[RMDB]
Chemical mapping of a 177-nucleotide RNA with DMS. The reactions ran in a buffer of 150 mM KOAc, 10 mM MgCl2 and 150 mM bicine (pH 8.5), at 24 C. Source: RMDB library TTRINS, as collected in RNAgym. For DMS, 1,467 sequencing reads were counted.
RNA sequence: GGGAACGACUCGAGUAGAGUCGAAAAGAUAUGGAUUUCAUAUAAGGUCCUGAAGCUUCGAUAAGAUCGCAUCGGAAACGAUGUAGAUCUUUUGACGAAGCCAGGACCUUAUAUGAAAUCCUAAGUCCUCUCUUUAGAGGUUCGCCUCUAAAGAGAGAAAAGAAACAACAACAACAAC
Reactivity to DMS in 0.01 (KOAc 150mM, MgCl2 10mM, bicine 150mM(pH8.5), 24C), signal-to-noise 1, nucleotides 027 to 126: g010a160u000a300u000g030g010a030u000u000u010c000a000u000a010u000a000a000g000g010u000c000c020u020g010a260a130g000c000u010u010c000g020a200u000a030a000g000a020u000c010g000c000a000u010c030g000g000a120a100a240c010g010a000u010g010u000a060g020a000u000c000u010u000u000u000g030a170c070g000a000a000g010c030c000a010g000g020a000c000c010u000u010a000u020a000u000g010a000a010a000u000c000c000u000a020a090g010u000c040